Source information: An RNA of 177 nucleotides, treated with DMS and 2A3 and read out base by base. The data come from the RNA Mapping Database (RMDB), library OK1LIB.

[RMDB]
RNA sequence: GGGAACGACUCGAGUAGAGUCGAAAAGGAAAAAGGUUCAAACGACCGUUACUUCCAAGAGGACAAAGCGCCUAAGAAAUUUGUUCCUGAAGGUAUCGAAGGACGUACGGCUUAUAAAGGUGCGUUACAUGCCAAGGGAUUUCGAUCCCUUGGCAUGAAAAGAAACAACAACAACAAC
Reactivity to DMS in 0.01 (KOAc 150mM, MgCl2 10mM, bicine 150mM(pH8.5), 24C), signal-to-noise 4, nucleotides 027 to 126: g010g010a030a040a070a130a090g000g030u010u010c070a110a130a150c280g000a020c020c000g010u010u010a050c070u020u000c000c000a030a110g000a130g030g000a040c030a050a060a110g030c070g000c070c040u010a060a100g040a050a160a090u010u000u000g010u020u020c040c000u020g010a070a060g000g000u010a050u040c050g010a160a090g010g020a060c040g000u000a010c110g000g000c050u010u020a140u040a090a090a090g000g010u000g000c010g000u020u060a160
Reactivity to 2A3 in 0.01 (KOAc 150mM, MgCl2 10mM, bicine 150mM(pH8.5), 24C), signal-to-noise 3, nucleotides 027 to 126: g060g090a060a110a000a010a000g160g030u120u150c170a210a100a040c060g020a020c060c040g000u000u020a020c030u030u000c060c000a000a040g080a070g020g000a000c010a020a140a040g050c040g060c040c030u080a050a020g070a120a130a070u110u130u080g070u050u020c000c000u000g060a180a050g060g000u050a040u150c080g040a100a030g030g000a000c020g000u020a030c030g010g050c050u110u040a110u210a140a140a000g080g000u050g010c000g000u000u000a010